[RMDB]
RNA sequence: GGGAACGACUCGAGUAGAGUCGAAAAGAUAUGGACACAGGAUGGCAAGAGCCCCUCUCGGAAACGAGAGGAGCGCUUGAUGACCCAUCUGUGUCCUAAGUCAAACCGAGGACUUCGGUCCUCGGAACUAGCUGUAGACGUUCGCGUCUACAGCUAGAAAAGAAACAACAACAACAAC
Reactivity to 2A3 in 0.01 (KOAc 150mM, MgCl2 10mM, bicine 150mM(pH8.5), 24C), signal-to-noise 1, nucleotides 027 to 126: g020a000u010a040u080g000g000a000c000a000c020a030g300g000a050u010g030g040c210a300a300g060a000g110c000c000c000c050u000c000u000c000g040g040a050a020a000c000g000a000g030a000g000g000a010g000c230g000c000u000u180g070a230u240g060a110c000c000c000a030u000c000u000g000u010g010u060c020c020u000a010a000g000u000c020a160a030a010c000c000g010a000g000g000a010c070u130u150c300g130g020u000c010c010u000c000g000g020a000a020
Reactivity to DMS in 0.01 (KOAc 150mM, MgCl2 10mM, bicine 150mM(pH8.5), 24C), signal-to-noise 1, nucleotides 027 to 126: g020a040u010a230u030g000g010a010c000a010c000a010g030g010a000u000g020g020c020a040a020g000a020g000c010c080c000c000u000c000u000c000g010g010a190a080a100c000g000a020g010a010g020g000a000g040c140g000c010u000u000g000a130u020g010a230c300c000c010a000u000c020u000g000u000g020u010c020c000u000a000a060g000u020c050a120a200a190c000c010g000a010g020g010a030c000u000u020c210g040g000u000c000c000u000c000g010g000a030a060
The data come from the RNA Mapping Database (RMDB), library TTRDES. Structure probing data (2A3 and DMS) for a 177-nucleotide construct. For 2A3 the reverse transcriptase was SuperScript II with manganese. The DMS profile rests on 1,063 reads. Conditions: 150 mM KOAc, 10 mM MgCl2 and 150 mM bicine (pH 8.5), 24 C. DMS adducts were read by reverse transcription with MarathonRT.